[RMDB]
RNA sequence: GGGAACGACUCGAGUAGAGUCGAAAAGGGAUGGAAUCCGAAGCCCCAUUGAGGGAUAAUACAGGCUCUCCCAUCCAACUCCUAUUCCAACACGUCCUCGUCGUACAGAGUGGUAACAUGUGUCACCUAUACUAAUGACCGUUCGCGGUCAUUAGAACAAAUUGAUAAGCUUCGGCUUAUCAAUUUGAAAAGAAACAACAACAACAAC
Reactivity to 2A3 in 0.01 (KOAc 150mM, MgCl2 10mM, bicine 150mM(pH8.5), 24C), signal-to-noise 5, nucleotides 027 to 156: g050g000g010a010u010g010g030a000a040u200c020c030g020a080a040g050c020c020c020c020a140u150u230g040a300g010g020g010a040u110a220a050u140a230c130a060g020g000c000u000c000u000c010c000c000a000u000c010c000a030a090c040u050c000c010u030a060u070u100c050c030a040a020c020a020c040g030u010c000c010u040c050g110u030c020g020u090a070c070a060g030a020g050u080g030g030u100a080a040c060a110u110g050u010g040u110c010a060c060c030u090a050u120a280c000u000a030a000u000g000a000c010c000g010u030u060c200g000c010g090g000u000c000a000u000u010a000g000a010a010
Reactivity to DMS in 0.01 (KOAc 150mM, MgCl2 10mM, bicine 150mM(pH8.5), 24C), signal-to-noise 3, nucleotides 027 to 156: g020g010g010a050u010g000g000a050a180u000c040c020g000a110a200g000c020c010c010c040a300u010u010g000a190g020g040g000a030u000a070a140u010a120c090a260g000g010c040u000c040u000c010c000c000a110u000c000c010a090a120c070u000c010c010u000a300u010u000c040c010a040a110c060a100c010g030u000c050c010u000c060g010u000c070g010u000a120c080a040g000a100g040u000g020g000u000a040a080c070a080u010g010u010g010u010c030a040c040c030u000a100u000a120c000u000a010a000u000g000a010c010c000g050u000u000c280g030c010g010g010u000c010a010u010u000a010g010a060a220